[RMDB]
RNA sequence: GGGAACGACUCGAGUAGAGUCGAAAAUCAAUAUAUAAGAGCUCUCGUCUGUUGCAAGAUAUAAGUUACUGAGCAUGCUAUGUUGGAAAGAUAGCAUGCUGGAGUAAUAAUGAAUUGCGGAACGCCUUAGGCUGGAAACAGAGCAGGGUUAGCAAUCGGUAGAGUCAUACUUCGGUAUGACUCUACCAAAAGAAACAACAACAACAAC
Reactivity to 2A3 in 0.01 (KOAc 150mM, MgCl2 10mM, bicine 150mM(pH8.5), 24C), signal-to-noise 1, nucleotides 027 to 156: u100c000a040a050u090a040u080a060u180a260a020g020a000g020c040u020c000u010c040g130u020c100u040g060u020u120g000c020a030a010g050a020u130a020u120a300a040g010u000u000a010c000u000g040a010g000c000a000u000g000c000u010a000u030g060u110u060g150g070a020a070a000g120a060u010a000g010c000a000u000g000c000u000g000g000a000g010u000a000a000u010a040a010u100g110a080a070u040u010g000c000g030g030a020a030c100g040c000c080u050u080a060g070g000c020u030g050g020a020a000a070c010a000g020a010g090c100a050g000g010g010u010u090a020g020c030a080a080u070c080